Chemical mapping of a 177-nucleotide RNA with 2A3 and DMS. The reactions ran in a buffer of 150 mM KOAc, 10 mM MgCl2 and 150 mM bicine (pH 8.5), at 24 C. High DMS reactivity at an A or C suggests that its Watson-Crick edge is free. DMS adducts were read by reverse transcription with MarathonRT. Values cover nucleotides 27 to 126.
[RMDB]
RNA sequence: GGGAACGACUCGAGUAGAGUCGAAAAGACAGUCGAAAGAACGUACGUUCGAGGCCCCGAUCGUACGGAAGGCCGAGCCAUCUUAUCUGGCGGGAUAUGAUGGGAAGAACCGCCGAAAAGACUGGAAGGUAAAGUCUAUCUUCGGAUAGACUUUACCAAAAGAAACAACAACAACAAC
Reactivity to 2A3 in 0.01 (KOAc 150mM, MgCl2 10mM, bicine 150mM(pH8.5), 24C), signal-to-noise 7, nucleotides 027 to 126: g050a010c000a000g020u020c010g080a090a100a050g090a130a040c000g010u020a000c000g000u010u020c030g010a190g040g070c010c000c000c000g000a010u010c000g000u010a010c010g000g070a070a070g040g000c040c020g000a020g060c010c010a000u000c010u020u030a010u010c010u060g140g110c160g090g050g000a000u020a010u050g020a000u010g010g030g020a030a040g060a080a060c030c010g000c000c000g030a070a070a010a000g010a010c030u010g010g050a080a060
Reactivity to DMS in 0.01 (KOAc 150mM, MgCl2 10mM, bicine 150mM(pH8.5), 24C), signal-to-noise 5, nucleotides 027 to 126: g020a210c010a030g010u010c030g000a140a090a110g020a120a110c000g020u000a000c000g000u000u000c000g000a140g000g010c050c060c020c010g010a010u000c020g010u000a000c000g000g000a050a120g000g030c020c070g010a140g030c010c010a010u010c000u000u010a000u000c000u000g000g010c230g000g000g010a010u010a000u000g000a010u000g000g000g000a100a140g020a160a160c100c100g000c000c010g010a090a100a110a130g000a010c010u000g000g010a140a060

For 2A3 the reverse transcriptase was SuperScript II with manganese. Source: RMDB library OK1LIB, as collected in RNAgym.